The record gives the reactivity of an RNA of 177 nucleotides to DMS. Reactivities are given for positions 27 through 126. The DMS profile rests on 1,505 reads.
RNA sequence: GGGAACGACUCGAGUAGAGUCGAAAAUGAAAGCUGUGUGAGCGAGGCGGGCGGAGGAUGAGGCCGUGCCCGGGCUCUGGCUGCAGCCGCCCGGGGACAGGCCGUGCACCCUCGGGCUCCGGAAAAACAUUCAAUCGUGGUUCGCCACGAUUGAAUGAAAAGAAACAACAACAACAAC
Reactivity to DMS in 0.01 (KOAc 150mM, MgCl2 10mM, bicine 150mM(pH8.5), 24C), signal-to-noise 2, nucleotides 027 to 126: u010g010a110a050a130g010c000u000g010u010g010u010g000a070g030c040g010a110g030g000c050g020g010g010c020g010g040a040g000g020a020u000g010a130g010g000c020c020g020u000g010c030c010c000g010g010g030c030u000c180u010g040g010c060u020g040c240a120g020c010c060g000c010c000c000g000g000g000g000a010c000a120g000g000c000c010g000u000g020c010a050c020c010c020u010c030g010g030g030c000u010c020c030g030g000a030a030a100a100a110
Annotation:
The RNA was probed in 150 mM KOAc, 10 mM MgCl2 and 150 mM bicine (pH 8.5) at 24 C.